An RNA of 177 nucleotides, treated with DMS and 2A3 and read out base by base. DMS adducts were read by reverse transcription with MarathonRT. The RNA was probed in 150 mM KOAc, 10 mM MgCl2 and 150 mM bicine (pH 8.5) at 24 C. For 2A3, 1,820 sequencing reads were counted.
RNA sequence: GGGAACGACUCGAGUAGAGUCGAAAAGAAGGAGAGUAGAUGAUUCGCGUUAAGUGUGUGUGAAUGGGAUCUCGUCACACAACGAAGCGAGAGCGCGGUGAAUCAUUGGAUCCGCUCCAAAACAAAACACAUGCGACUAGUUCGCUAGUCGCAUGUGAAAAGAAACAACAACAACAAC
Reactivity to DMS in 0.01 (KOAc 150mM, MgCl2 10mM, bicine 150mM(pH8.5), 24C), signal-to-noise 1, nucleotides 027 to 126: g010a160a230g010g010a000g020a000g020u010a300g000a000u000g000a010u020u000c000g000c010g000u030u010a070a030g000u000g000u010g010u000g020u000g000a020a110u020g040g000g010a010u000c020u030c230g000u000c020a010c010a070c000a000a000c020g040a050a020g030c020g000a160g000a110g020c010g000c060g010g000u000g030a000a000u000c020a010u000u000g030g000a040u000c000c000g040c020u030c010c000a060a090a090a090c140a120a070a150a220
Reactivity to 2A3 in 0.01 (KOAc 150mM, MgCl2 10mM, bicine 150mM(pH8.5), 24C), signal-to-noise 1, nucleotides 027 to 126: g150a050a100g000g000a000g000a010g000u010a000g000a000u000g000a000u000u000c000g000c020g040u060u110a060a040g000u070g000u010g000u000g000u000g060a060a020u010g000g000g010a000u000c030u000c100g010u000c000a000c000a000c010a030a020c070g020a010a010g000c030g020a060g000a000g020c000g000c000g000g020u020g000a000a000u000c000a010u000u010g000g000a000u000c000c000g000c010u000c010c000a010a050a000a000c040a000a070a010a010